[RMDB]
The record gives the reactivity of an RNA of 177 nucleotides to 2A3 and DMS. 2A3 adducts were read by reverse transcription with SuperScript II with manganese.
RNA sequence: GGGAACGACUCGAGUAGAGUCGAAAAGAUAUGGAUCGCCCAUACACCGAUGAAAGUGAUCGGAAACGAUCACUGGAGGUGUGGGUCGAUCCUAAGUCAAAUCUUAGCUCCUUCGGGAGCUAAGAAACUAUACCUAUACCUUCGGGUAUAGGUAUAGAAAAGAAACAACAACAACAAC
Reactivity to 2A3 in 0.01 (KOAc 150mM, MgCl2 10mM, bicine 150mM(pH8.5), 24C), signal-to-noise 4, nucleotides 027 to 126: g000a000u030a010u060g000g010a000u000c010g040c000c010c010a020u170a080c200a030c030c020g300a300u010g020a030a000a000g010u000g010a010u000c000g000g000a010a020a010c010g010a000u000c000a000c000u000g000g010a010g020g030u070g000u010g000g010g070u300c050g000a000u010c000c000u000a010a010g010u000c020a060a040a170u030c000u000u000a000g000c000u010c000c000u010u090c270g200g010g000a020g000c000u000a000a000g000a000a000a000
Reactivity to DMS in 0.01 (KOAc 150mM, MgCl2 10mM, bicine 150mM(pH8.5), 24C), signal-to-noise 5, nucleotides 027 to 126: g010a010u000a150u020g000g000a000u010c000g020c010c000c020a140u010a210c220a050c010c010g000a120u010g000a190a130a020g000u000g000a010u000c000g010g000a030a040a070c000g010a010u000c000a010c000u000g010g010a020g040g040u000g020u000g000g000g010u010c030g020a010u000c010c000u000a000a070g000u000c010a110a130a160u000c000u000u000a010g010c000u000c000c000u000u020c260g020g020g010a020g010c000u000a000a000g000a040a090a220